[RMDB]
RNA sequence: GGGAACGACUCGAGUAGAGUCGAAAAUGAGAAUGUACAGGUCUCCUCAGGGAGUAGAUUGUAUGAUUGGCAGGCUUUGCCUCAUUUCCACAUUGAUGGACAGUGAGAGCGCAUCCAGACUGGAGACCUCUGCAUGAGCCAGGGCUGCCAGGUGGUACACCCGCUAUAAUUUCGAUUAUAGCGGGUGAAAAGAAACAACAACAACAAC
Reactivity to DMS in 0.01 (KOAc 150mM, MgCl2 10mM, bicine 150mM(pH8.5), 24C), signal-to-noise 2, nucleotides 027 to 156: u000g010a220g010a140a070u000g030u010a050c060a020g020g030u010c010u000c010c000u000c110a140g030g010g010a110g040u000a080g010a140u010u000g020u010a070u010g000a160u000u000g010g000c050a070g040g020c060u010u020u000g000c030c030u000c010a020u000u000u010c000c000a050c060a260u000u010g020a160u000g000g010a040c070a050g020u000g000a040g000a170g060c020g020c060a100u010c030c010a170g010a150c040u000g030g020a050g000a030c040c010u000c030u010g010c060a120u000g000a070g000c020c060a080g010g000g030c000u010g020c000c020a020g020g030u000g010g020u000a200
Reactivity to 2A3 in 0.01 (KOAc 150mM, MgCl2 10mM, bicine 150mM(pH8.5), 24C), signal-to-noise 3, nucleotides 027 to 156: u120g010a000g060a120a080u100g010u090a040c030a040g090g000u010c010u020c000c030u150c100a080g050g050g020a030g020u170a030g010a090u090u140g010u160a090u150g060a090u090u070g020g010c050a020g120g020c060u110u120u100g000c000c000u000c000a000u010u020u020c030c010a010c030a060u150u300g130a190u030g130g000a020c070a070g000u030g040a020g000a010g040c010g010c040a040u000c020c020a030g140a230c160u140g000g000a000g000a020c000c000u000c000u000g010c010a040u090g000a020g020c040c030a000g000g000g030c000u020g020c000c000a040g010g050u040g000g160u230a020